[RMDB]
This 177-nucleotide RNA was probed chemically with DMS and 2A3. 2A3 is a SHAPE reagent: it acylates the 2'-hydroxyl of flexible nucleotides of all four kinds. For 2A3, 20,408 sequencing reads were counted. 2A3 adducts were read by reverse transcription with SuperScript II with manganese.
RNA sequence: GGGAACGACUCGAGUAGAGUCGAAAAGACAGUCGAAAGAACGUACGUUCGAGGCCCCGAUCGUACGGAAGGCCGAGCCAUCUUAUCAGGCGGGAUAUGAUGGGAAAGAAAGACUGGACCGCCGAAAGGUAUACACUAUCUUCGGAUAGUGUAUACCAAAAGAAACAACAACAACAAC
Reactivity to DMS in 0.01 (KOAc 150mM, MgCl2 10mM, bicine 150mM(pH8.5), 24C), signal-to-noise 6, nucleotides 027 to 126: g010a170c020a020g000u010c010g010a120a110a110g020a090a080c020g000u000a020c070g000u000u000c000g000a120g000g020c030c040c040c000g000a040u000c110g020u010a050c000g000g000a080a080g010g030c020c020g000a140g010c000c000a000u000c000u010u000a010u010c010a070g010g010c000g000g000g010a010u000a010u000g000a010u000g000g010g000a050a070a090g010a090a100a130g000a020c000u000g000g000a110c010c010g010c000c010g020a110a090a070
Reactivity to 2A3 in 0.01 (KOAc 150mM, MgCl2 10mM, bicine 150mM(pH8.5), 24C), signal-to-noise 8, nucleotides 027 to 126: g090a010c010a010g010u030c020g090a130a100a080g070a120a030c020g020u100a020c040g000u010u010c020g010a150g040g070c010c010c000c000g010a020u070c030g000u040a030c000g010g050a090a070g080g050c040c020g000a010g030c000c000a000u000c000u010u020a010u010c030a040g000g020c010g000g010g000a010u000a000u030g010a000u010g010g030g060a040a140a020g120a030a070a000g010a010c010u020g040g050a030c000c000g000c000c000g010a070a060a000